[RMDB]
RNA sequence: GGGAACGACUCGAGUAGAGUCGAAAACUUUGGGGCGUGCCUGCAGCCGCCGGAGCAGUGCUGGCUUCUGUGCGAGUACCUGCCCGGCGGCAACCUCACCCAGUGGCUGCACGGUGACCGCAAGCAGAUUACUUUGCCCAUUCGUGGGCAAAGUAAUAAAAGAAACAACAACAACAAC
Reactivity to 2A3 in 0.01 (KOAc 150mM, MgCl2 10mM, bicine 150mM(pH8.5), 24C), signal-to-noise 1, nucleotides 027 to 126: c050u050u060u170g010g000g020g030c050g030u070g030c000c040u040g050c030a040g000c000c000g000c010c020g010g010a150g010c000a000g010u000g040c020u080g100g000c000u140u070c190u300g230u190g030c000g030a000g020u020a010c010c010u000g010c000c000c000g000g000c040g070g010c010a010a010c000c000u000c000a070c000c020c000a060g000u020g090g020c040u070g040c020a050c120g000g010u050g000a080c010c020g050c070a040a040g050c020a010g000
Reactivity to DMS in 0.01 (KOAc 150mM, MgCl2 10mM, bicine 150mM(pH8.5), 24C), signal-to-noise 2, nucleotides 027 to 126: c100u020u000u010g050g000g010g010c060g030u000g010c020c020u010g030c090a190g020c000c010g000c000c010g000g000a120g000c010a040g030u000g000c010u000g010g010c010u010u020c250u010g000u000g030c010g000a050g000u000a020c190c040u000g010c000c020c010g000g020c000g000g000c050a000a000c050c020u000c050a110c030c000c020a110g010u000g000g040c040u010g020c010a090c120g000g000u000g000a090c040c030g000c030a040a060g010c100a100g000